[RMDB]
RNA sequence: GGGAACGACUCGAGUAGAGUCGAAAAGAUAUGGAGCUGAACUACAUCCGAAACAGCGUUGAAACAUACGUGGUCUCGGAAACGAGACCACGUAUGUGGAGCUGAUAAGGAUGCAGCUCCUAAGUCAGCUAUAUGAUCUGUUCGCAGAUCAUAUAGCAAAAGAAACAACAACAACAAC
Reactivity to DMS in 0.01 (KOAc 150mM, MgCl2 10mM, bicine 150mM(pH8.5), 24C), signal-to-noise 4, nucleotides 027 to 126: g000a020u020a300u010g020g000a030g020c000u000g020a090a080c090u010a300c010a000u010c000c000g010a250a210a300c020a020g000c010g000u020u000g000a280a120a020c000a000u000a000c000g040u000g000g020u010c000u000c000g000g000a090a050a150c000g000a000g010a000c000c000a000c010g010u000a000u000g000u000g000g000a120g020c000u000g000a010u010a080a300g000g020a010u000g000c000a000g000c000u010c000c000u000a000a080g000u000c020a230
Reactivity to 2A3 in 0.01 (KOAc 150mM, MgCl2 10mM, bicine 150mM(pH8.5), 24C), signal-to-noise 2, nucleotides 027 to 126: g040a030u080a070u230g000g030a000g000c010u010g000a090a030c060u220a070c300a000u010c010c000g040a200a300a060c010a000g000c030g080u150u040g050a150a120a000c000a000u010a010c000g020u000g010g000u000c000u030c000g030g060a100a050a030c020g020a000g010a000c010c000a020c000g000u000a000u000g000u000g000g000a000g020c010u000g000a010u040a040a040g000g000a000u010g010c010a000g000c020u000c010c000u000a020a000g050u000c050a020

Chemical mapping of a 177-nucleotide RNA with DMS and 2A3.
For 2A3, 5,611 sequencing reads were counted.
High 2A3 reactivity points to a flexible backbone, as in loops and unpaired stretches.